An RNA of 177 nucleotides, treated with 2A3 and DMS and read out base by base. The reactions ran in a buffer of 150 mM KOAc, 10 mM MgCl2 and 150 mM bicine (pH 8.5), at 24 C. Values cover nucleotides 27 to 126.
RNA sequence: GGGAACGACUCGAGUAGAGUCGAAAAGAAAGACUCGAUAAACUUCAUUGGUCAGAGCAACACGCAGUCACAUAAGUUUCUGAAAUGUGUCACUGGUUUUCCUCUGACUAAUUGAAGAUAUCGAGAAGAUAUCAGGUGGGUUCGCCCACCUGAUAUCAAAAGAAACAACAACAACAAC
Reactivity to 2A3 in 0.01 (KOAc 150mM, MgCl2 10mM, bicine 150mM(pH8.5), 24C), signal-to-noise 7, nucleotides 027 to 126: g150a020a110a010g060a010c000u000c000g000a000u010a060a280a110c010u000u000c000a000u000u000g010g000u000c000a000g000a000g000c020a010a010c010a000c090g260c030a010g030u090c020a010c000a020u090a120a160g110u070u230u120c160u180g160a130a130a080u040g000u000g040u060c050a000c000u000g000g000u000u000u000u020c020c000u010c010u000g000a000c000u000a000a010u040u090g000a000a000g000a000u000a000u000c010g000a000g010a000a000
Reactivity to DMS in 0.01 (KOAc 150mM, MgCl2 10mM, bicine 150mM(pH8.5), 24C), signal-to-noise 2, nucleotides 027 to 126: g000a080a110a070g000a080c020u020c010g000a000u010a000a060a060c020u000u000c010a020u000u010g000g000u000c000a010g000a000g010c210a030a040c100a080c030g020c010a000g000u000c030a000c000a000u000a110a180g010u070u040u060c160u000g010a080a050a050u000g000u000g020u000c250a010c010u000g010g000u000u000u000u000c300c000u010c010u000g000a020c010u000a010a020u010u020g000a020a000g000a220u000a000u000c000g000a050g000a030a050